[RMDB]
RNA sequence: GGGAACGACUCGAGUAGAGUCGAAAAUCAGGUGCGGAAGUCGACUCACCGCCGUUACCACGACCCCGACGACCACACCGUCAGCUGCGGCGCGGCGUGGCGACUAUUGGUCGCUAGUGUCGUGCUCUACCCGCAGCCGUUUCGACGGCUGCGGGUAAAAAGAAACAACAACAACAAC
Reactivity to 2A3 in 0.01 (KOAc 150mM, MgCl2 10mM, bicine 150mM(pH8.5), 24C), signal-to-noise 2, nucleotides 027 to 126: u060c010a000g000g000u050g150c040g090g000a080a020g120u060c010g010a070c050u010c080a050c040c000g000c000c000g010u000u100a050c050c050a060c090g120a080c000c000c000c000g050a080c000g000a000c000c030a050c010a010c000c020g080u030c050a010g060c090u200g060c000g050g020c040g000c000g050g020c060g000u010g000g000c000g000a000c000u120a300u170u300g070g000u000c000g010c000u000a000g080u000g000u090c000g000u000g020c000u030c020